[RMDB]
RNA sequence: GGGAACGACUCGAGUAGAGUCGAAAAUAACUGAAGCCAUUACAAGUUUGUAUAACCAAGGGAAAAAACUUUUCGUGGUGUCUAGUAAGAAGAGUGAUGUAUUAGAAAGAAAUUUAUCGGCUAUUGGAAUAAUUCUCCACUUCGGUGGAGAAUUAUUAAAAGAAACAACAACAACAAC
Reactivity to 2A3 in 0.01 (KOAc 150mM, MgCl2 10mM, bicine 150mM(pH8.5), 24C), signal-to-noise 2, nucleotides 027 to 126: u120a020a000c020u000g080a030a000g000c010c000a010u030u080a010c000a070a040g000u000u000u090g130u090a160u030a150a150c050c020a040a110g120g010g050a000a120a000a000a000a000c020u020u040u020u010c030g010u000g010g010u000g070u030c010u010a020g000u040a110a050g080a050a060g110a020g060u080g080a090u090g010u100a150u030u140a020g070a070a090a070g070a020a080a010u040u260u100a160u120c030g000g020c060u060a120u110u110g050g020
Reactivity to DMS in 0.01 (KOAc 150mM, MgCl2 10mM, bicine 150mM(pH8.5), 24C), signal-to-noise 2, nucleotides 027 to 126: u030a050a110c030u020g000a130a160g000c010c030a040u020u020a080c130a040a060g010u020u000u000g000u040a010u000a110a120c030c040a060a080g020g010g000a000a090a100a030a060a020c040u000u000u000u000c100g020u000g000g000u000g000u000c080u010a040g020u000a080a080g010a090a150g000a110g020u010g000a080u050g000u020a060u010u010a080g010a050a030a090g000a040a060a030u030u010u020a090u020c030g010g030c040u010a100u020u030g000g000

The data come from the RNA Mapping Database (RMDB), library OK1LIB.
An RNA of 177 nucleotides, treated with 2A3 and DMS and read out base by base.
For DMS the reverse transcriptase was MarathonRT.
The RNA was probed in 150 mM KOAc, 10 mM MgCl2 and 150 mM bicine (pH 8.5) at 24 C.
The 2A3 profile rests on 556 reads.
The DMS profile rests on 2,692 reads.
For 2A3 the reverse transcriptase was SuperScript II with manganese.
In probing experiments dimethyl sulfate is read out at A N1 and C N3, which are open when not base-paired.